[RMDB]
RNA sequence: GGGAACGACUCGAGUAGAGUCGAAAACGCCACAAUGCCUGGCUAAAUUUUUUGUAUUUUUAGUGGAGACGGGGUUUCACCAUGUUAGCCAGGAUGGUCUCCAUCUCCUGACCUUGUGAUCCGCCCAAGGUGCUGCUAUCUUCGGAUAGCAGCACCUAAAAGAAACAACAACAACAAC
Reactivity to 2A3 in 0.01 (KOAc 150mM, MgCl2 10mM, bicine 150mM(pH8.5), 24C), signal-to-noise 1, nucleotides 027 to 126: c180g020c000c010a000c000a150a260u140g000c000c000u000g070g040c000u000a000a000a250u300u210u050u000u000u060g180u060a300u000u010u000u000u130a040g000u070g000g000a000g000a070c010g120g090g000g050u000u030u200c040a070c140c000a030u180g000u300u090a000g000c000c000a000g000g000a070u070g000g000u060c000u000c070c000a040u010c050u000c000c130u010g080a180c070c110u130u000g070u000g040a040u020c030c070g000c000c000c000a000

The record gives the reactivity of an RNA of 177 nucleotides to 2A3. The 2A3 profile rests on 306 reads.